[RMDB]
RNA sequence: GGGAACGACUCGAGUAGAGUCGAAAAGUACGUACCACUGCGCGCGCAGGCCUAGGAUCACGUAUACGUACGCGCGAUCACUGACUCGUACGUACAGCGCAGUACGCGCAGCAGAGGCCCUGCGCUAGGAACCCGUUAUGUUCGCAUAACGGGUUCCAAAAGAAACAACAACAACAAC
Reactivity to 2A3 in 0.01 (KOAc 150mM, MgCl2 10mM, bicine 150mM(pH8.5), 24C), signal-to-noise 1, nucleotides 027 to 126: g030u000a010c070g020u020a030c000c060a090c170u210g120c250g050c040g010c000g000c090a040g020g070c000c000u080a070g130g040a030u050c000a000c030g010u000a010u020a110c030g020u020a010c080g000c000g010c000g030a030u080c050a030c170u040g110a210c000u040c070g030u050a010c030g000u020a040c040a070g130c110g010c040a010g040u030a020c050g000c020g100c040a010g000c010a010g000a020g180g060c050c000c000u000g000c020g030c000u000a030
Reactivity to DMS in 0.01 (KOAc 150mM, MgCl2 10mM, bicine 150mM(pH8.5), 24C), signal-to-noise 1, nucleotides 027 to 126: g000u000a070c020g000u000a160c070c070a170c200u000g000c080g020c100g010c040g010c030a100g010g000c000c000u000a160g030g020a010u000c030a030c030g020u000a160u000a070c130g000u000a000c050g020c010g040c000g000a040u000c050a300c050u000g030a100c050u000c050g000u000a020c010g000u000a040c080a140g010c060g000c070a240g010u000a040c080g050c030g050c020a050g020c170a050g000a100g000g000c060c020c020u010g030c000g010c000u000a060
Notes:
This 177-nucleotide RNA was probed chemically with 2A3 and DMS. The RNA was probed in 150 mM KOAc, 10 mM MgCl2 and 150 mM bicine (pH 8.5) at 24 C. For 2A3 the reverse transcriptase was SuperScript II with manganese. For DMS, 940 sequencing reads were counted. The 2A3 profile rests on 1,159 reads.